Structure probing data (2A3 and DMS) for a 177-nucleotide construct. For 2A3 the reverse transcriptase was SuperScript II with manganese. Conditions: 150 mM KOAc, 10 mM MgCl2 and 150 mM bicine (pH 8.5), 24 C.
RNA sequence: GGGAACGACUCGAGUAGAGUCGAAAAUAAAAUCGUAGGGCGAGACGAUCGACGUAAAUCGCUCAAACUACUCGAGACCAAAGGAAUACGCUUCGGUAACACGCUCUAAUCCCGAGCGAUAAAUGAACUUGAGCAUUUCAUUCGUGAAAUGCUCAAGAAAAGAAACAACAACAACAAC
Reactivity to 2A3 in 0.01 (KOAc 150mM, MgCl2 10mM, bicine 150mM(pH8.5), 24C), signal-to-noise 1, nucleotides 027 to 126: u060a020a020a010a060u030c040g020u070a150g000g000g020c000g000a010g040a050c010g010a070u080c050g130a080c040g070u060a000a080a120u000c040g000c040u020c000a070a000a030c000u000a010c000u010c030g030a010g070a040c030c020a120a030a000g070g030a130a140u090a130c020g020c010u050u060c010g000g010u010a050a020c080a010c050g000c000u000c020u030a000a050u060c010c000c000g020a000g000c020g010a010u150a070a100a050u160g090a060a020
Reactivity to DMS in 0.01 (KOAc 150mM, MgCl2 10mM, bicine 150mM(pH8.5), 24C), signal-to-noise 1, nucleotides 027 to 126: u000a000a010a080a090u000c040g040u000a110g020g020g020c100g000a160g000a000c020g000a130u010c040g000a100c080g040u010a000a030a040u000c030g000c040u030c010a150a220a120c000u000a000c000u000c000g000a000g000a180c070c060a010a010a050g000g000a140a080u030a120c080g000c040u010u000c020g010g040u010a090a070c160a070c090g030c010u000c000u000a170a110u000c000c000c000g000a040g000c020g000a100u010a000a130a040u020g010a060a100